[RMDB]
RNA sequence: GGGAACGACUCGAGUAGAGUCGAAAAGGGCAAUACCGGGCCCGAUACCGGAAUUAGUAGUUUUCUACGAGAGGCCCAAUCUGCGGCCAAAUGCAGUGUAGGUCGAACCGAGGACCGAGACUCGAUAAUUACGUCGAUAGAUGGACGAUUACAUCAACCUGACUAAUCAUUUCGAUGAUUAGUCAGGAAAAGAAACAACAACAACAAC
Reactivity to 2A3 in 0.01 (KOAc 150mM, MgCl2 10mM, bicine 150mM(pH8.5), 24C), signal-to-noise 3, nucleotides 027 to 156: g020g000g010c030a030a030u020a090c000c000g010g010g010c020c030c060g040a000u010a010c000c000g000g060a090a080u190u060a070g030u000a030g040u070u080u210u050c020u040a060c040g000a030g020a060g090g040c010c000c000a000a100u020c030u050g020c030g050g000c040c120a050a020a030u160g000c020a000g000u020g030u140a020g020g000u000c040g010a030a010c050c030g020a040g100g000a000c000c000g010a010g030a030c010u010c040g010a020u080a120a070u160u100a020c050g000u010c000g050a070u080a110g080a030u110g030g010a010c020g100a110u100u190a060c050a040u080c010a020a050
Reactivity to DMS in 0.01 (KOAc 150mM, MgCl2 10mM, bicine 150mM(pH8.5), 24C), signal-to-noise 2, nucleotides 027 to 156: g020g000g020c020a110a150u000a110c030c030g040g000g010c040c080c070g020a090u000a060c010c010g040g000a150a150u030u000a070g010u000a030g000u010u000u000u020c050u000a020c000g000a170g000a260g030g020c000c000c000a080a200u000c020u010g010c000g010g020c020c250a020a090a110u010g010c030a050g010u000g010u000a100g000g020u010c000g010a130a130c050c000g010a240g010g010a080c020c040g020a110g000a110c020u020c000g020a040u000a070a090u010u010a050c050g010u010c000g020a180u000a090g010a090u000g030g010a080c070g000a190u000u010a120c030a100u000c030a110a210
Chemical mapping of a 207-nucleotide RNA with 2A3 and DMS. For 2A3, 2,047 sequencing reads were counted. Reactivities are given for positions 27 through 156. The data come from the RNA Mapping Database (RMDB), library OK3TST. The RNA was probed in 150 mM KOAc, 10 mM MgCl2 and 150 mM bicine (pH 8.5) at 24 C.